An RNA of 207 nucleotides, treated with 2A3 and read out base by base. It was measured as part of the RMDB library OK3TST.
RNA sequence: GGGAACGACUCGAGUAGAGUCGAAAACGGCGCUGGACUCCCAGCGCAACACCAAGAUGCGGCUGGCAUUCCUGACUCAAAUCCUGUUCCGGAGGCAUCGCCGCUGUUUAUGGGCUUCGAGGUGGGAUUCCGCGGAAACCAGGCUACCGAGGACUACGCCAGUAGGCUUAUUCGUAAGCCUACUGGCAAAAGAAACAACAACAACAAC
Reactivity to 2A3 in 0.01 (KOAc 150mM, MgCl2 10mM, bicine 150mM(pH8.5), 24C), signal-to-noise 1, nucleotides 027 to 156: c030g040g030c000g010c000u020g000g120a170c040u060c100c010c000a000g000c010g000c000a000a010c060a000c010c000a060a050g010a040u080g000c000g030g000c110u030g050g040c000a010u050u050c030c000u010g010a020c000u020c180a030a140a120u080c050c020u120g020u040u060c030c050g000g000a010g010g050c010a030u120c170g050c010c050g000c040u000g000u020u120u050a170u060g050g030g010c050u130u100c120g090a080g010g040u060g030g020g000a040u120u040c060c010g010c000g060g000a020a020a010c000c040a030g110g030c000u100a080c000c070g120a000g000g030a020c040u300a040c120
The 2A3 profile rests on 519 reads.